[RMDB]
RNA sequence: GGGAACGACUCGAGUAGAGUCGAAAAAGCGCUAGAGAUGUACACGGGUUUGCCCCCGUAUCUGUGUACUAUCUCUUUUCAUACCCCAGGGAUAGGUUGAGUGGGGGCGGUCUGGGCUUGGCGCGAAGUGUAUUUAUAUUUUCGAAUAUAAAUACACAAAAGAAACAACAACAACAAC
Reactivity to DMS in 0.01 (KOAc 150mM, MgCl2 10mM, bicine 150mM(pH8.5), 24C), signal-to-noise 5, nucleotides 027 to 126: a140g000c040g010c020u000a020g000a010g010a040u010g030u010a050c020a050c000g010g000g000u000u010u040g010c020c000c000c010c000g000u020a040u010c010u020g000u010g010u010a030c000u040a010u010c000u000c000u010u010u030u020c110a100u020a180c090c010c010c040a020g010g010g000a110u010a030g000g010u020u010g000a080g020u000g020g000g010g010g030c010g000g010u010c010u010g000g000g020c020u010u010g020g020c010g020c000g010a050a090
Reactivity to 2A3 in 0.01 (KOAc 150mM, MgCl2 10mM, bicine 150mM(pH8.5), 24C), signal-to-noise 9, nucleotides 027 to 126: a000g040c030g000c020u050a020g000a010g010a190u080g080u150a030c130a040c030g040g010g010u030u070u300g020c000c000c000c000c000g030u050a210u020c010u020g100u030g030u090a030c010u020a010u000c000u010c000u060u040u020u010c030a060u110a120c010c000c010c020a000g020g000g010a040u060a060g080g060u120u170g040a060g030u140g020g010g000g000g000c010g000g010u020c010u010g010g010g010c010u020u040g010g000c010g000c010g040a090a020